[RMDB]
RNA sequence: GGGAACGACUCGAGUAGAGUCGAAAAGAUAUGGAGUAGGUUGAAGUGCUUGGACCUUAAGUCGGAAACGACUUAAGCUAGCACCAACUACUCCUAAGUCAAAGGGUGACACUUCGGUGUCACCCAAUCGAUUCUUACCGUUCGCGGUAAGAAUCGAAAAAGAAACAACAACAACAAC
Reactivity to 2A3 in 0.01 (KOAc 150mM, MgCl2 10mM, bicine 150mM(pH8.5), 24C), signal-to-noise 1, nucleotides 027 to 126: g000a000u010a000u020g020g000a030g020u040a000g010g270u050u110g110a300a220g030u040g020c050u300u300g000g020a050c000c000u000u000a000a000g000u010c010g000g020a000a000a000c020g000a010c000u010u040a000a000g000c000u020a000g000c040a020c020c020a050a000c000u000a000c000u030c020c000u000a010a000g000u000c030a050a100a090g000g030g000u020g020a010c000a000c040u070u200c300g220g020u000g000u010c000a010c010c020c020a000a000
Reactivity to DMS in 0.01 (KOAc 150mM, MgCl2 10mM, bicine 150mM(pH8.5), 24C), signal-to-noise 1, nucleotides 027 to 126: g000a010u000a040u020g010g010a030g020u000a000g000g030u040u020g020a300a150g000u000g020c000u000u000g000g010a010c300c010u010u000a000a000g000u010c000g030g000a000a010a030c010g000a000c000u000u000a000a020g000c000u010a000g060c000a000c040c120a050a080c000u000a000c000u010c010c000u000a000a060g000u000c020a130a100a130g020g010g000u000g000a000c000a030c020u000u020c220g080g020u000g010u010c000a000c000c000c000a010a000